The record gives the reactivity of an RNA of 207 nucleotides to 2A3. The RNA was probed in 150 mM KOAc, 10 mM MgCl2 and 150 mM bicine (pH 8.5) at 24 C. Source: RMDB library ARCHII, as collected in RNAgym.
RNA sequence: GGGAACGACUCGAGUAGAGUCGAAAAAGACGCUUGCGGAAGCCUUAGCAGCCCACAAGGGUUCCCCUCGCGACUAUAUUUAAAGGAAGGGGAUUGAAUGCUAGUGCCUGAGCUGCCAACUUGGGUGCGACAUCGCCAAAUUGCGGAGAACUCCACAUCGUAAAAGUUACUUCGGUAACUUUUACGAAAAAGAAACAACAACAACAAC
Reactivity to 2A3 in 0.01 (KOAc 150mM, MgCl2 10mM, bicine 150mM(pH8.5), 24C), signal-to-noise 2, nucleotides 027 to 156: a000g040a000c030g000c030u060u090g000c010g020g050a100a010g050c000c030u050u030a020g030c040a000g000c010c010c000a150c150a160a240g020g000g000u020u030c030c020c010c000u040c000g030c010g060a010c070u050a070u040a080u280u290u120a120a070a020g060g030a010a010g040g000g000g010a010u000u080g010a020a030u000g000c020u030a010g000u010g030c010c010u010g040a010g020c050u070g110c090c000a040a020c100u040u040g010g000g000u040g010c000g020a050c010a040u080c040g040c040c020a090a030a190u160u060g000c010g000g060a080g020a070a010c010u000c030c010a060c040a050